[RMDB]
RNA sequence: GGGAACGACUCGAGUAGAGUCGAAAAGAUAUGGAUACCAUAGGGAGCUGGACUAGAGCUUACAUCAAUAUCGGAAACGAUAUUGAUGUAAGCUCUAGUCCCAGCGAAGAACUAUGUAUCCUAAGUCCAUCUACCAGUAGUUCGCUACUGGUAGAUGAAAAGAAACAACAACAACAAC
Reactivity to DMS in 0.01 (KOAc 150mM, MgCl2 10mM, bicine 150mM(pH8.5), 24C), signal-to-noise 2, nucleotides 027 to 126: g000a120u010a300u000g010g000a020u000a000c300c130a030u010a020g000g010g010a040g000c000u000g000g010a060c000u000a000g010a050g010c000u000u000a000c000a000u000c020a030a010u000a030u000c010g010g000a180a100a240c020g020a030u000a000u010u000g030a020u000g020u000a000a020g020c000u000c010u010a000g000u000c260c040c010a010g010c000g010a090a110g000a140a170c010u000a010u000g010u000a020u010c010c000u010a060a100g000u010c040